The data come from the RNA Mapping Database (RMDB), library OK2TRN. The record gives the reactivity of an RNA of 177 nucleotides to 2A3 and DMS. 2A3 adducts were read by reverse transcription with SuperScript II with manganese.
RNA sequence: GGGAACGACUCGAGUAGAGUCGAAAACAUGAACAACUUUGAUUCUGUCGACUCCAAUAAUUUUAUCAAAUUCAUUUAAUACGCCAUCAAAGUCCUCUUUCACAUUAUAUCCAGCAUCAUGCGUAUGAUGUACCCUGAAAUUCGUUUCAGGGUACAUAAAAGAAACAACAACAACAAC
Reactivity to 2A3 in 0.01 (KOAc 150mM, MgCl2 10mM, bicine 150mM(pH8.5), 24C), signal-to-noise 3, nucleotides 027 to 126: c030a040u160g020a040a000c010a020a100c040u150u190u120g060a100u150u030c010u020g020u010c020g030a050c020u010c060c020a020a080u140a070a040u070u140u120u200a130u090c010a000a070a090u180u020c000a020u100u060u160a070a030u080a060c020g000c020c000a020u020c070a050a160a060g030u040c000c010u060c020u050u100u090c080a040c020a020u110u110a040u050a020u160c010c050a010g000c010a030u030c000a020u130g040c030g030u090a110u110g080
Reactivity to DMS in 0.01 (KOAc 150mM, MgCl2 10mM, bicine 150mM(pH8.5), 24C), signal-to-noise 3, nucleotides 027 to 126: c080a060u000g000a060a070c080a070a100c110u000u010u000g000a150u000u000c030u010g040u000c030g010a090c090u010c040c030a040a070u010a050a060u010u010u010u000a080u000c050a030a030a090u010u000c040a040u010u010u000a060a050u000a070c070g010c020c050a040u000c050a060a080a110g010u010c020c010u010c060u000u000u000c050a060c060a080u000u000a060u010a080u000c050c030a060g020c050a040u010c050a040u000g020c060g010u000a050u010g000
The RNA was probed in 150 mM KOAc, 10 mM MgCl2 and 150 mM bicine (pH 8.5) at 24 C.